[RMDB]
Chemical mapping of a 177-nucleotide RNA with DMS. Values cover nucleotides 27 to 126. The reactions ran in a buffer of 150 mM KOAc, 10 mM MgCl2 and 150 mM bicine (pH 8.5), at 24 C. DMS adducts were read by reverse transcription with MarathonRT. It was measured as part of the RMDB library TTRDES. The DMS profile rests on 1,595 reads.
RNA sequence: GGGAACGACUCGAGUAGAGUCGAAAAGAUAUGGAGAUAUACUGAGCGAAGAACUGUAUCGGAAACGAUACAGGGAGCUCGUAUGAUCUCCUAAGUCAAAACGAGACCGCCUUCGGGCGGUCUCGAACAUAAAGCUGAACUUCGGUUCAGCUUUAUGAAAAGAAACAACAACAACAAC
Reactivity to DMS in 0.01 (KOAc 150mM, MgCl2 10mM, bicine 150mM(pH8.5), 24C), signal-to-noise 2, nucleotides 027 to 126: g000a050u000a170u000g000g000a010g020a090u010a050u000a000c000u060g030a000g010c000g000a110a230g000a110a300c000u000g000u000a000u010c000g000g000a080a040a140c000g000a000u000a010c010a000g000g000g010a020g020c000u010c020g050u000a000u000g000a040u010c000u000c000c010u000a010a110g000u000c030a140a060a140a150c020g000a070g000a020c010c000g000c000c050u000u020c250g030g030g040c000g000g030u020c000u010c000g010a060a140